[RMDB]
RNA sequence: GGGAACGACUCGAGUAGAGUCGAAAAGUUGCUGGCUCAGUGUUGUCUUGAUCUGUCAUACCCCAAAAUAUGUCAUAGUGAAAUAUAGCACAUUCGGACUGCACUCCUAAUCACUCGACACAAUUGUGAAGAAUCCACCAUCGGCGCGUCUCUCGCGGUAUUGCUAAUCCUUCGGGAUUAGCAAUACAAAAGAAACAACAACAACAAC
Reactivity to 2A3 in 0.01 (KOAc 150mM, MgCl2 10mM, bicine 150mM(pH8.5), 24C), signal-to-noise 4, nucleotides 027 to 156: g060u060u060g020c030u030g070g020c020u060c080a050g020u030g050u100u040g050u040c040u060u110g020a060u020c020u030g050u040c020a030u090a160c000c010c010c020a030a040a040a040u170a070u070g060u050c050a030u070a110g070u070g100a000a070a020u240a080u080a060g040c020a020c020a070u130u090c040g020g020a030c030u030g000c020a040c030u000c000c000u030a040a030u050c040a020c060u040c050g060a010c010a010c030a150a280u090u100g020u020g070a070a060g030a060a050u020c010c030a010c030c000a070u100c020g080g010c010g050c000g010u030c010u010c010u030c080g020c050g020
Reactivity to DMS in 0.01 (KOAc 150mM, MgCl2 10mM, bicine 150mM(pH8.5), 24C), signal-to-noise 2, nucleotides 027 to 156: g020u010u010g000c010u010g040g040c020u000c040a080g030u020g030u000u010g000u000c030u010u010g020a240u000c010u010g010u000c020a140u000a130c000c020c000c070a040a060a100a060u020a060u000g030u000c030a200u000a080g030u000g010a100a080a160u000a070u000a090g010c040a020c020a080u000u000c060g040g010a080c030u010g010c010a050c020u010c010c030u010a020a140u000c030a080c030u000c030g000a110c020a060c050a090a170u010u010g030u000g020a060a130g010a060a080u010c040c050a030c040c010a070u000c030g050g000c050g050c040g020u000c010u000c020u010c020g020c280g000